[RMDB]
RNA sequence: GGGAACGACUCGAGUAGAGUCGAAAAGGAAUAAACGGUUUUUGCAUUAUUGGUAGAACGUGGAAUGAGUUUCUGCAAAUGCUAUCCGAAAUCGUGGCUAUAUUGGAACUUUGCCCGAAAAAGCGUGUCGUAUCCCCUUUUUCGAAAGGGGAUACGAAAAAGAAACAACAACAACAAC
Reactivity to 2A3 in 0.01 (KOAc 150mM, MgCl2 10mM, bicine 150mM(pH8.5), 24C), signal-to-noise 2, nucleotides 027 to 126: g010g030a060a100u130a100a130a010c010g040g050u010u030u090u180u110g000c000a000u010u090a090u100u300g150g000u060a000g000a040a020c100g060u130g090g160a140a130u080g050a110g140u010u060u000c020u000g000c010a030a030a050u020g000c010u050a050u090c030c010g010a060a000a000u040c000g020u010g010g010c060u050a010u050a070u300u210g050g010a020a030c010u060u040u090g000c010c030c000g080a070a050a030a010a000g120c090g050u140g020
Reactivity to DMS in 0.01 (KOAc 150mM, MgCl2 10mM, bicine 150mM(pH8.5), 24C), signal-to-noise 2, nucleotides 027 to 126: g020g010a150a120u000a080a120a060c030g000g010u000u000u000u000u000g000c050a090u000u000a130u000u030g010g010u000a010g020a030a010c050g040u010g010g010a140a100u010g010a130g000u010u010u010c000u000g000c020a060a030a040u010g010c010u000a050u010c150c170g000a020a030a030u000c050g020u000g000g030c120u000a060u000a070u000u000g020g010a200a160c100u010u000u000g000c000c010c000g000a020a070a050a110a090g000c180g010u020g010
Notes
An RNA of 177 nucleotides, treated with 2A3 and DMS and read out base by base. 2A3 adducts were read by reverse transcription with SuperScript II with manganese. The reactions ran in a buffer of 150 mM KOAc, 10 mM MgCl2 and 150 mM bicine (pH 8.5), at 24 C. For DMS the reverse transcriptase was MarathonRT.